[RMDB]
RNA sequence: GGGAACGACUCGAGUAGAGUCGAAAAUAGUUUCCCUGAAUACAAGAUAAAAUAUUCAAACUUCACCCUCUGGUCUUAUCUUUCUUACCUUAUGGACGGACACGGUGCCAGCCUCCCCGCGGCUCCGCAAGAACGCAUAGUUCGCUAUGCGUUCUUGAAAAGAAACAACAACAACAAC
Reactivity to 2A3 in 0.01 (KOAc 150mM, MgCl2 10mM, bicine 150mM(pH8.5), 24C), signal-to-noise 1, nucleotides 027 to 126: u110a000g050u020u040u010c020c020c000u030g050a020a010u110a060c090a100a090g050a240u160a120a200a140a050u050a080u070u030c020a070a080a080c050u100u080c070a060c000c030c030u020c060u070g000g070u010c030u080u100a100u110c040u040u140u010c020u030u040a140c020c000u050u220a070u190g030g030a000c010g010g030a060c040a000c120g000g000u000g030c000c000a010g000c000c030u030c050c010c000c000g020c010g030g000c030u000c060c000g020
Reactivity to DMS in 0.01 (KOAc 150mM, MgCl2 10mM, bicine 150mM(pH8.5), 24C), signal-to-noise 2, nucleotides 027 to 126: u010a180g000u000u000u000c000c010c010u010g000a060a020u000a000c080a130a110g010a070u000a080a070a140a120u000a030u000u000c030a090a100a080c100u000u030c060a070c060c010c000u010c030u000g000g000u000c030u000u010a060u010c030u000u000u000c080u000u000a090c100c030u020u000a090u000g010g020a080c100g000g010a090c100a100c060g000g010u000g000c040c020a110g000c000c030u000c020c010c000c170g010c100g000g000c020u000c030c040g000